Source: RMDB library M2PK50, as collected in RNAgym. Chemical mapping of a 177-nucleotide RNA with DMS and 2A3. For 2A3 the reverse transcriptase was SuperScript II with manganese. DMS (dimethyl sulfate) methylates the pairing face of unpaired adenines and cytosines. The RNA was probed in 150 mM KOAc, 10 mM MgCl2 and 150 mM bicine (pH 8.5) at 24 C. The 2A3 profile rests on 1,469 reads.

[RMDB]
RNA sequence: GGGAACGACUCGAGUAGAGUCGAAAAUGUCCCAGUUUCGACUGGGACAAAAGCAUGAGGAGGAUCAAAGAUCAAUGCCGUCGCUCAUGCGUAAAGACGGCAAAAGGCUAGUGUUCGCACUAGCCAAUCUCAAUCACUCGUUCGCGAGUGAUUGAGAAAAAGAAACAACAACAACAAC
Reactivity to DMS in 0.01 (KOAc 150mM, MgCl2 10mM, bicine 150mM(pH8.5), 24C), signal-to-noise 1, nucleotides 027 to 126: u010g010u000c010c000c000a020g000u000u000u010c120g010a030c000u010g000g000g000a030c010a000a020a100a140g010c050a040u010g000a010g020g010a200g010g000a200u000c070a100a040a100g020a120u030c100a030a030u030g020c000c000g000u000c020g010c050u010c010a010u000g000c010g000u010a050a100a140g010a000c000g000g000c010a070a040a080a140g000g000c000u010a000g030u000g010u000u010c280g020c010a030c000u000a010g000c000c010a010a010
Reactivity to 2A3 in 0.01 (KOAc 150mM, MgCl2 10mM, bicine 150mM(pH8.5), 24C), signal-to-noise 1, nucleotides 027 to 126: u040g000u010c000c000c000a000g000u050u060u040c190g090a020c000u010g000g040g040a020c000a000a040a000a000g030c000a010u010g020a000g070g040a040g080g010a070u090c100a070a170a110g070a080u080c040a040a080u130g000c000c000g020u000c000g020c020u050c000a000u010g010c000g000u000a020a010a000g020a000c020g000g020c000a010a020a020a100g010g000c000u000a000g000u020g020u040u080c220g010c130a000c000u000a010g000c000c000a000a000